[RMDB]
RNA sequence: GGGAACGACUCGAGUAGAGUCGAAAAGAUAUGGAGACCGAGGCUGAUGACCGCAUACAUGGUAAAACUAUGUCGGAAACGACAUAGGAGUACGCCAUGUAUGCGCAAGGCCGAGGUCUCCUAAGUCCAUUGAUGGUGAGUUCGCUCACCAUCAAUGAAAAGAAACAACAACAACAAC
Reactivity to DMS in 0.01 (KOAc 150mM, MgCl2 10mM, bicine 150mM(pH8.5), 24C), signal-to-noise 3, nucleotides 027 to 126: g010a110u020a300u000g000g000a000g000a020c000c000g000a300g000g020c020u000g010a170u020g010a140c300c010g000c000a000u010a010c010a020u000g000g030u000a010a090a150a090c000u000a000u010g000u000c000g020g000a110a050a190c000g030a010c000a000u000a000g000g040a100g000u000a050c300g000c000c000a010u000g000u000a000u000g000c000g000c010a000a150g050g020c000c010g000a300g000g000u000c000u000c000c010u000a010a140g000u000c030

The record gives the reactivity of an RNA of 177 nucleotides to DMS. DMS adducts were read by reverse transcription with MarathonRT. The reactions ran in a buffer of 150 mM KOAc, 10 mM MgCl2 and 150 mM bicine (pH 8.5), at 24 C. Reactivities are given for positions 27 through 126. The DMS profile rests on 1,863 reads.